[RMDB]
RNA sequence: GGGAACGACUCGAGUAGAGUCGAAAAACGGUGCGGAAGUUCGCGCUUCCGUGAAACGCGAAAAUCGGACGGUGGCUGCAAGUCGCAUCGCAAAACCACGGCAAGUGGAGUUAGCGAGAGGAGGCUGAAACCAUCCAACACUUCGGUGUUGGAUGAACAAUAUUACCAGCUUCGGCUGGUAAUAUUGAAAAGAAACAACAACAACAAC
Reactivity to DMS in 0.01 (KOAc 150mM, MgCl2 10mM, bicine 150mM(pH8.5), 24C), signal-to-noise 3, nucleotides 027 to 156: a040c030g010g000u000g020c000g000g020a030a070g010u010u000c200g030c230g000c000u000u000c010c080g000u000g010a040a070a070c020g000c030g000a080a060a090a100u000c060g010g010a080c070g020g010u000g030g020c060u000g020c040a050a070g010u000c030g040c000a250u000c020g030c020a040a070a120a150c010c020a040c020g020g010c130a110a140g000u000g010g000a080g010u010u000a130g020c030g000a060g000a170g020g010a090g020g000c010u010g000a080a050a120c070c010a010u010c000c000a020a030c000a010c000u010u000c300g050g020u000g010u000u010g000g010a000u000g000a030a090
Reactivity to 2A3 in 0.01 (KOAc 150mM, MgCl2 10mM, bicine 150mM(pH8.5), 24C), signal-to-noise 6, nucleotides 027 to 156: a000c040g040g010u060g010c010g010g020a060a030g020u130u150c050g020c010g010c060u020u000c010c000g010u030g040a100a070a000c100g040c040g080a060a020a020a120u130c040g020g010a010c020g020g040u030g030g020c040u060g020c080a030a040g040u040c020g010c050a030u010c000g000c020a040a060a010a020c000c010a010c010g100g010c190a170a050g020u020g030g020a060g030u100u110a020g010c040g010a030g010a020g040g040a020g020g000c020u020g010a060a040a020c030c000a000u000c000c000a000a000c000a000c000u050u110c230g110g000u010g010u000u000g000g000a000u000g000a000a000